[RMDB]
Conditions: 150 mM KOAc, 10 mM MgCl2 and 150 mM bicine (pH 8.5), 24 C.
The record gives the reactivity of an RNA of 177 nucleotides to DMS and 2A3.
The DMS profile rests on 1,467 reads.
DMS adducts were read by reverse transcription with MarathonRT.
High 2A3 reactivity points to a flexible backbone, as in loops and unpaired stretches.
RNA sequence: GGGAACGACUCGAGUAGAGUCGAAAACGGCUUUCUCAGGAUUGUCAUGGUGGAUGGCUAAAUUAUAACUUAAAUCCUCAUUCCGCUCAACUCUUCGAUUGUAGACGACUAUCAAUAAACUGGGUGCAAUGGUGAACCCUUUCGAGGGUUCACCAUUAAAAGAAACAACAACAACAAC
Reactivity to DMS in 0.01 (KOAc 150mM, MgCl2 10mM, bicine 150mM(pH8.5), 24C), signal-to-noise 1, nucleotides 027 to 126: c110g020g000c040u020u020u000c010u000c120a250g000g040a070u040u000g000u000c050a020u000g030g000u020g000g000a070u000g000g010c080u010a100a150a100u020u000a070u010a020a040c090u050u050a020a060a060u000c030c000u000c060a070u000u000c020c020g000c000u010c010a020a060c050u030c000u000u010c040g000a050u000u000g000u010a140g020a100c070g010a040c140u010a010u060c070a020a040u000a020a120a130c000u020g000g000g020u030g000c160
Reactivity to 2A3 in 0.01 (KOAc 150mM, MgCl2 10mM, bicine 150mM(pH8.5), 24C), signal-to-noise 2, nucleotides 027 to 126: c010g050g010c040u000u180u000c020u000c000a000g010g040a070u090u000g050u000c030a000u060g020g030u060g000g140a040u010g040g120c020u040a030a140a000u270u230a150u040a060a000c030u050u070a080a020a050u110c020c000u110c000a020u010u070c050c000g000c010u010c000a000a210c000u030c030u030u010c020g110a150u000u050g090u130a040g020a050c020g010a040c020u110a060u150c010a010a000u080a090a060a030c100u050g010g010g000u030g040c010

The data come from the RNA Mapping Database (RMDB), library RFM100.